[RMDB]
Source information
Conditions: 150 mM KOAc, 10 mM MgCl2 and 150 mM bicine (pH 8.5), 24 C. This 170-nucleotide RNA was probed chemically with DMS and 2A3. The DMS profile rests on 30,472 reads. 2A3 adducts were read by reverse transcription with SuperScript II with manganese. The data come from the RNA Mapping Database (RMDB), library 15KLIB. The 2A3 profile rests on 45,197 reads.
RNA sequence: GGGAACGACUCGAGUAGAGUCGAAAAGCAGGCUGGGGACGAAGCCCCCACCGGGCGCUCCCCUCGGCGGGCCGUCCAUUGGGUUCACACCCCCAGGCCGCGGGCCGGCUACUCUUCUUUCUCUUUCGCACCUAAGCGUUCGCGCUUAGGAAAAGAAACAACAACAACAAC
Reactivity to DMS in 0.01 (KOAc 150mM, MgCl2 10mM, bicine 150mM(pH8.5), 24C), signal-to-noise 9, nucleotides 027 to 129: g070c090a090g020g060c070u020g010g010g000g000a040c100g000a100a120g030c090c060c010c040c070a080c220c130g030g010g040c000g000c070u070c040c000c030c030u020c130g070g000c080g010g010g000c300c020g000u050c000c020a120u050u040g000g000g000u010u000c140a090c170a120c080c030c010c040c030a060g020g030c050c020g030c000g010g020g020c060c020g000g000c060u000a070c030u000c030u040u040c040u020u000u010c040u000c110u000u030u030c120g040c140a140
Reactivity to 2A3 in 0.01 (KOAc 150mM, MgCl2 10mM, bicine 150mM(pH8.5), 24C), signal-to-noise 9, nucleotides 027 to 129: g080c100a040g040g000c020u010g000g000g010g010a020c060g070a090a030g020c010c000c000c020c000a040c030c020g000g020g000c040g010c050u100c000c000c010c010u070c070g100g000c060g020g020g000c020c000g010u020c010c000a080u070u140g020g000g000u130u140c040a040c010a030c090c000c000c000c010a030g070g030c010c010g030c020g010g040g030c010c000g010g000c000u060a040c010u010c000u050u000c000u020u100u020c010u010c000u010u060u050c050g020c030a060